[RMDB]
RNA sequence: GGGAACGACUCGAGUAGAGUCGAAAAAUGACGCAUAGUCGUCCGACAGUUUUCCUUCAAGGGUAUUAGAACUAUCAUUCACGAUCGUCUGGGCGCGAAUGGUAUUGCCGCUGACUGCGGCCGUAUACGUAGUAGCAGUGUUCGCACUGCUACUACGAAAAGAAACAACAACAACAAC
Reactivity to 2A3 in 0.01 (KOAc 150mM, MgCl2 10mM, bicine 150mM(pH8.5), 24C), signal-to-noise 4, nucleotides 027 to 126: a010u050g030a000c010g000c080a270u140a260g040u240c010g010u000c030c030g070a030c030a050g030u000u050u060u070c010c000u060u170c070a090a070g160g000g010u090a070u120u130a050g060a070a010c030u010a010u030c020a030u060u000c010a000c060g080a140u100c020g270u080c210u280g100g020g000c020g010c010g030a010a000u040g000g020u030a040u030u110g000c000c000g000c030u050g100a130c090u090g000c000g000g010c000c010g070u130a140u020a030
Reactivity to DMS in 0.01 (KOAc 150mM, MgCl2 10mM, bicine 150mM(pH8.5), 24C), signal-to-noise 4, nucleotides 027 to 126: a050u010g010a030c020g010c050a220u010a150g020u000c010g000u010c020c120g000a090c160a110g010u010u010u000u000c010c010u000u010c190a110a110g000g000g010u010a050u010u000a090g020a080a100c200u000a000u000c010a020u000u000c020a030c040g000a020u000c030g010u000c160u010g000g010g000c010g010c020g000a010a020u000g000g000u000a010u000u010g020c000c020g030c000u000g010a130c230u020g000c010g000g010c010c190g020u000a040u010a070